RNA sequence: GGGAACGACUCGAGUAGAGUCGAAAAGGCUGGUGCCGGAGCCGAUACCGGAAUACGAGACCUUAUGUGCGGUCGAAUGCACUGAAGUACGAAAGUACGAAGAGGUCAUACCGAGGACCGAGACUCGAUAUGCUCGGUAGAUGGAGCUUUACAUCAAGGUAUCAUACGUGUUCGCACGUAUGAUACCAAAAGAAACAACAACAACAAC
Reactivity to DMS in 0.01 (KOAc 150mM, MgCl2 10mM, bicine 150mM(pH8.5), 24C), signal-to-noise 2, nucleotides 027 to 156: g030g030c080u000g050g000u000g030c000c060g000g030a050g050c010c030g030a210u010a060c000c010g000g020a080a070u000a070c070g000a150g000a080c020c010u000u000a140u020g030u000g030c000g010g020u010c180g050a120a110u020g010c000a110c060u000g000a190a170g010u010a040c000g000a300a110a150g020u000a040c030g000a090a160g000a110g040g030u010c010a230u000a020c080c000g000a130g000g010a230c020c060g020a100g030a130c030u000c020g020a040u010a070u000g000c020u040c000g000g080u000a050g000a080u000g020g000a090g000c060u010u010u010a100c070a110u000c020a100a270
Reactivity to 2A3 in 0.01 (KOAc 150mM, MgCl2 10mM, bicine 150mM(pH8.5), 24C), signal-to-noise 3, nucleotides 027 to 156: g020g010c060u080g070g020u090g050c000c030g010g010a010g030c080c110g080a040u110a100c000c010g010g050a060a030u180a040c080g030a020g010a080c000c000u050u110a040u130g020u010g000c000g000g030u160c160g040a100a040u150g010c000a000c020u070g050a130a010g010u000a000c000g020a090a050a000g000u020a000c020g000a030a020g080a010g020g000u000c010a010u060a010c020c020g040a010g010g040a000c020c010g020a020g040a080c020u030c100g070a120u070a040u260g020c010u000c010g000g000u000a020g000a010u030g020g000a050g050c000u050u070u050a030c010a020u080c030a050a030

Conditions: 150 mM KOAc, 10 mM MgCl2 and 150 mM bicine (pH 8.5), 24 C. This 207-nucleotide RNA was probed chemically with DMS and 2A3. Values cover nucleotides 27 to 156. DMS adducts were read by reverse transcription with MarathonRT.